[RMDB]
RNA sequence: GGGAACGACUCGAGUAGAGUCGAAAACGAGGGGUGGGCGAAAGUUGCCAUGAGACCGUAACUUUCGUAGUCAUUGAUAAUGGGGCAGGUCUCGCUCUUUUGUCAUUGCGGUUGCCUAGAGGCAUGGAAAACCAUGACAGGUUCGCCUGUCAUGGAAGUUUUAUCGGCAGUUCGCUGCCGAUAAAACAAAAGAAACAACAACAACAAC
Reactivity to 2A3 in 0.01 (KOAc 150mM, MgCl2 10mM, bicine 150mM(pH8.5), 24C), signal-to-noise 1, nucleotides 027 to 156: c080g020a110g010g030g040g040u280g010g000g000c020g000a010a000a000g000u000u040g000c030c030a170u130g010a060g000a030c010c000g000u010a000a000c000u000u000u010c040g010u020a030g070u070c060a110u000u130g080a020u070a110a060u010g000g000g010g000c020a010g010g090u010c000u000c040g030c030u030c000u040u060u050u080g080u110c030a050u010u150g040c000g010g020u110u040g010c000c000u020a050g010a050g070g000c040a020u040g020g050a130a070a000a000c010c000a000u000g000a000c000a000g020g000u030u040c100g020c030c000u000g000u030c000a000u000g040g000a010a010
An RNA of 207 nucleotides, treated with 2A3 and read out base by base. 2A3 adducts were read by reverse transcription with SuperScript II with manganese. The 2A3 profile rests on 690 reads. The reactions ran in a buffer of 150 mM KOAc, 10 mM MgCl2 and 150 mM bicine (pH 8.5), at 24 C.